[RMDB]
RNA sequence: GGGAACGACUCGAGUAGAGUCGAAAAUUAGGUCCUGACAUAUUUUUAAGUAUGUGCUACAGGUGUCCUAAGGAAAUAGUAAGCACUGUGAGCGCUCUUGUCUACAAUAAUAAAUUGUUAGCCAAGAAUCCUUCUGUGUUCGCACAGAAGAAAAGAAACAACAACAACAAC
Reactivity to DMS in 0.01 (KOAc 150mM, MgCl2 10mM, bicine 150mM(pH8.5), 24C), signal-to-noise 9, nucleotides 027 to 129: u000u000a010g000g000u000c010c010u020g030a090c020a000u030a000u010u030u080u060u050a070a200g010u020a010u010g000u000g030c160u000a260c040a010g020g040u000g040u060c000c020u000a000a050g010g020a040a070a100u050a050g050u030a080a050g020c010a060c060u030g030u030g030a070g020c090g000c100u000c000u040u010g020u020c020u030a000c020a010a010u060a100a110u040a080a090a050u000u000g020u060u040a010g010c050c010a010a010g020a070a080u030c130
Reactivity to 2A3 in 0.01 (KOAc 150mM, MgCl2 10mM, bicine 150mM(pH8.5), 24C), signal-to-noise 9, nucleotides 027 to 129: u050u010a010g030g000u020c000c000u010g020a020c020a000u050a030u040u120u060u070u130a140a050g020u020a020u040g040u020g070c060u060a060c020a010g030g000u020g060u110c000c000u000a030a030g100g020a050a090a030u160a050g090u120a100a020g030c040a010c090u070g060u090g160a020g040c050g020c020u000c000u020u000g020u000c000u010a010c020a020a020u120a130a050u160a130a230a020u020u020g040u080u080a010g000c000c000a000a010g010a020a060u070c010
An RNA of 170 nucleotides, treated with DMS and 2A3 and read out base by base. DMS adducts were read by reverse transcription with MarathonRT. For 2A3 the reverse transcriptase was SuperScript II with manganese. The data come from the RNA Mapping Database (RMDB), library 15KLIB. Values are in units of 0.01, from 0 to 300, in steps of 10.